An RNA of 177 nucleotides, treated with 2A3 and DMS and read out base by base. It was measured as part of the RMDB library OK1LIB. Conditions: 150 mM KOAc, 10 mM MgCl2 and 150 mM bicine (pH 8.5), 24 C. Values cover nucleotides 27 to 126. For 2A3, 1,306 sequencing reads were counted. The DMS profile rests on 3,043 reads.
[RMDB]
RNA sequence: GGGAACGACUCGAGUAGAGUCGAAAACAAAGAAAUGGACAACUUUGAUGAAGGCACUAUUAAAGUGUUGGAAGAAACAGCUGAGAGACACAUGACCUGGGAAAUAGAUGUUGCUGACUGCUGUCAGUCCUUUUGGAUCCUUCGGGAUCCAAAAGGAAAAAGAAACAACAACAACAAC
Reactivity to 2A3 in 0.01 (KOAc 150mM, MgCl2 10mM, bicine 150mM(pH8.5), 24C), signal-to-noise 3, nucleotides 027 to 126: c020a000a090a010g070a040a110a030u180g030g030a000c010a060a060c070u060u020u050g080a110u150g040a040a010g040g030c000a000c040u070a110u300u250a130a070a060g050u030g010u040u040g050g040a090a080g020a030a080a000c010a010g000c040u070g010a030g000a000g020a110c010a000c010a050u040g100a130c030c040u070g010g040g030a000a130a020u090a040g020a020u070g050u090u050g020c020u010g090a000c030u050g050c010u020g010u020c000a030g080
Reactivity to DMS in 0.01 (KOAc 150mM, MgCl2 10mM, bicine 150mM(pH8.5), 24C), signal-to-noise 3, nucleotides 027 to 126: c080a040a060a050g020a040a130a110u030g000g000a010c130a060a080c060u010u010u000g010a130u000g010a170a160g020g000c090a020c050u000a100u040u020a090a090a090g000u000g010u000u000g000g000a090a040g000a010a040a030c110a060g000c010u030g010a170g000a060g000a030c080a050c080a120u010g010a120c050c010u020g000g010g000a040a050a120u050a080g010a080u000g030u030u010g010c030u000g000a070c050u000g000c090u010g020u000c060a030g010